[RMDB]
RNA sequence: GGGAACGACUCGAGUAGAGUCGAAAAAGCGUGUACGCACGCAAUGAGUGGGAGGCCAGUGCACGGCAGGGGGAGCUGCAGGGCCGUCGGAGGGGCCCCAGCGUCUGAGCCCUGUCCUCCCGCAGAAUUUGCUAGUGGUAUUCGUACCACUAGCAAAAAAAGAAACAACAACAACAAC
Reactivity to 2A3 in 0.01 (KOAc 150mM, MgCl2 10mM, bicine 150mM(pH8.5), 24C), signal-to-noise 4, nucleotides 027 to 126: a000g000c020g000u010g020u030a020c230g020c060a010c020g020c050a010a110u210g060a010g020u030g000g000g000a000g000g010c010c010a020g020u050g040c020a030c090g060g000c040a050g030g020g020g000g030a070g000c000u020g010c100a110g040g010g010c030c010g070u090c050g080g070a110g010g060g010g010c000c000c000c000a010g000c010g080u040c040u070g030a020g010c000c030c000u000g000u000c000c000u000c000c000c000g000c000a000g000a030a140
Reactivity to DMS in 0.01 (KOAc 150mM, MgCl2 10mM, bicine 150mM(pH8.5), 24C), signal-to-noise 2, nucleotides 027 to 126: a080g000c030g000u010g020u010a120c130g030c020a000c000g000c030a090a060u040g020a160g020u000g000g000g030a020g000g000c060c010a010g000u000g000c000a170c070g010g000c020a160g010g000g000g000g020a160g030c010u020g000c230a140g000g000g040c000c000g000u010c080g000g000a130g020g010g010g000c000c010c000c010a030g000c040g000u000c060u030g000a140g020c000c020c000u020g000u000c000c010u000c000c000c010g030c010a100g020a070a060